[RMDB]
RNA sequence: GGGAACGACUCGAGUAGAGUCGAAAAUCUGCUUGAAAAUUGGAAAGGAUAUCACGUGGAACUCUUGAUGGAAGGUGGGUAAACCGAAAGUAUUAAGACAGUAUUACUUUGCAAGGACAAGGGGCCUCUGUCAAGUUUGAUAUCUGGGGCCACUACACCAUCUAUGUAUCUUCGGAUACAUAGAUGGAAAAGAAACAACAACAACAAC
Reactivity to 2A3 in 0.01 (KOAc 150mM, MgCl2 10mM, bicine 150mM(pH8.5), 24C), signal-to-noise 3, nucleotides 027 to 156: u020c000u040g000c000u030u110g050a030a090a120a100u110u100g020g010a090a060a010g010g000a030u050a020u130c050a040c130g040u060g060g060a060a070c040u020c010u060u090g030a060u040g000g040a030a070g050g020u070g010g030g040u080a100a050a000c020c010g030a030a030a030g030u020a030u070u110a060a030g090a050c050a000g040u050a030u070u050a050c040u030u060u040g030c020a030a020g020g010a040c020a000a040g030g010g010g000c000c000u020c000u010g010u020c010a000a100g070u050u220u180g040a030u020a030u030c090u050g000g000g000g020c010c010a000c010u030a020c010a010
Reactivity to DMS in 0.01 (KOAc 150mM, MgCl2 10mM, bicine 150mM(pH8.5), 24C), signal-to-noise 1, nucleotides 027 to 156: u010c010u000g010c040u020u020g000a060a040a130a150u010u000g000g010a110a180a130g010g020a090u010a050u000c020a060c130g010u010g000g030a030a100c050u000c040u010u070g010a130u000g010g000a070a040g040g030u000g000g020g010u010a040a080a110c050c030g020a040a040a120g020u000a070u000u010a070a120g030a130c150a090g020u020a080u000u000a050c040u010u010u010g020c060a020a070g020g010a150c030a050a050g010g010g010g020c030c020u000c020u010g000u000c030a050a160g020u000u000u000g000a030u000a020u000c110u000g010g000g040g000c020c030a010c000u000a000c100a130

Source: RMDB library OK3TST, as collected in RNAgym.
Structure probing data (2A3 and DMS) for a 207-nucleotide construct.
Values cover nucleotides 27 to 156.
For DMS the reverse transcriptase was MarathonRT.
For 2A3, 2,087 sequencing reads were counted.